[RMDB]
RNA sequence: GGGAACGACUCGAGUAGAGUCGAAAAGAUUACCAUGGAUGCAGACAUUAAUUGGGAGAUGGACCCUUUCAACUACUUUAGAAUCUUACAAGGUACUUUGAAUAUAGUAGUGAACGUGUGUUCAGAGCAAUUCAACAGAAUUCGUUCUGUUGAAUUGAAAAGAAACAACAACAACAAC
Reactivity to 2A3 in 0.01 (KOAc 150mM, MgCl2 10mM, bicine 150mM(pH8.5), 24C), signal-to-noise 9, nucleotides 027 to 126: g030a050u080u160a060c020c020a030u060g050g010a030u070g030c020a010g090a140c020a080u100u170a130a110u140u130g060g040g010a100g040a060u050g030g000a020c000c000c000u000u020u010c040a100a060c000u030a010c010u060u080u050a050g030a080a050u020c020u080u150a070c060a130a030g070g010u030a060c040u070u120u120g040a080a010u180a020u050a090g020u000a000g000u010g030a040a010c030g060u090g010u020g010u080u010c010a010g020a010g060
Reactivity to DMS in 0.01 (KOAc 150mM, MgCl2 10mM, bicine 150mM(pH8.5), 24C), signal-to-noise 9, nucleotides 027 to 126: g010a140u010u010a110c040c020a110u010g010g010a070u000g010c060a060g010a080c070a050u000u000a050a110u010u000g010g010g010a110g010a120u000g010g000a070c030c020c010u000u000u000c040a070a060c060u000a020c020u000u000u000a050g010a110a050u010c030u000u010a110c270a090a060g010g020u000a050c060u000u000u010g010a100a100u010a060u010a020g010u000a020g010u000g000a020a030c110g010u000g020u010g010u000u000c010a050g000a140g010